[RMDB]
RNA sequence: GGGAACGACUCGAGUAGAGUCGAAAAUCGCAACCGCGCUUAUACCAGCAGAGGGUAGAGAACUAUGAGAGGUUUAUUCCUGAGAACACUUCGUUUGUACAACCCUGAGGUGGAACGAGUGGGCCGCGGCCACGUACAAGUUCGCUUGUACGUGGCCAAAAGAAACAACAACAACAAC
Reactivity to DMS in 0.01 (KOAc 150mM, MgCl2 10mM, bicine 150mM(pH8.5), 24C), signal-to-noise 2, nucleotides 027 to 126: u000c100g000c100a110a220c040c130g000c020g000c070u000u040a090u000a050c070c080a110g000c020a090g020a080g000g000g000u000a070g000a150g030a090a010c130u000a010u030g000a100g050a030g040g000u000u040u000a160u050u000c050c020u030g010a140g000a070a090c070a070c010u020u000c090g000u060u000u000g000u040a100c050a100a160c070c010c030u060g000a130g000g000u000g000g040a040a020c080g000a100g050u030g000g000g000c030c010g000c100
Reactivity to 2A3 in 0.01 (KOAc 150mM, MgCl2 10mM, bicine 150mM(pH8.5), 24C), signal-to-noise 3, nucleotides 027 to 126: u070c030g000c030a010a050c000c010g040c000g000c000u070u060a080u060a120c000c020a020g110c050a050g060a080g050g030g030u100a050g010a000g000a060a010c060u020a180u180g030a130g020a040g090g070u000u060u130a110u150u070c030c020u090g050a100g080a100a000c000a020c050u080u210c070g010u060u070u070g110u150a100c060a090a080c010c000c010u070g010a090g030g050u090g030g010a100a030c020g000a030g060u050g000g000g000c020c020g040c040